[RMDB]
RNA sequence: GGGAACGACUCGAGUAGAGUCGAAAAAGCUGAACACAAGGGAAUAAUUGCUGCAAUAAACAGCCCCACUCCCCGUGCCAAUCCGUUCAGCUGCAAGACCAACGUUUGCUGGGCGAAAGCAUUGGAACCAUGCCAUCAUUUUCGAAUGAUGGCAUGGAAAAGAAACAACAACAACAAC
Reactivity to DMS in 0.01 (KOAc 150mM, MgCl2 10mM, bicine 150mM(pH8.5), 24C), signal-to-noise 2, nucleotides 027 to 126: a030g060c040u000g000a040a100c030a120c140a130a060g000g020g020a040a070u010a030a090u030u000g030c000u000g010c070a130a090u000a130a090a210c020a050g010c020c010c000c050a170c190u010c010c000c000c120g000u020g010c100c060a070a150u000c130c050g000u010u000c000a000g000c020u000g000c080a120a060g000a130c100c090a040a110c150g000u010u000u010g000c020u010g000g000g000c050g000a020a060a060g010c030a050u000u000g000g000a140a100
Reactivity to 2A3 in 0.01 (KOAc 150mM, MgCl2 10mM, bicine 150mM(pH8.5), 24C), signal-to-noise 1, nucleotides 027 to 126: a000g040c040u040g020a130a010c040a030c050a070a090g040g030g030a080a070u120a160a050u120u100g040c000u000g000c020a030a090u080a170a150a020c010a020g020c000c000c000c000a010c020u030c000c000c020c000g000u020g030c000c030a020a070u030c030c000g020u000u000c000a010g000c000u020g000c020a040a040g050a050c060c010a000a040c060g000u010u130u110g030c000u010g030g020g000c000g000a120a040a010g020c020a030u010u030g080g030a080a070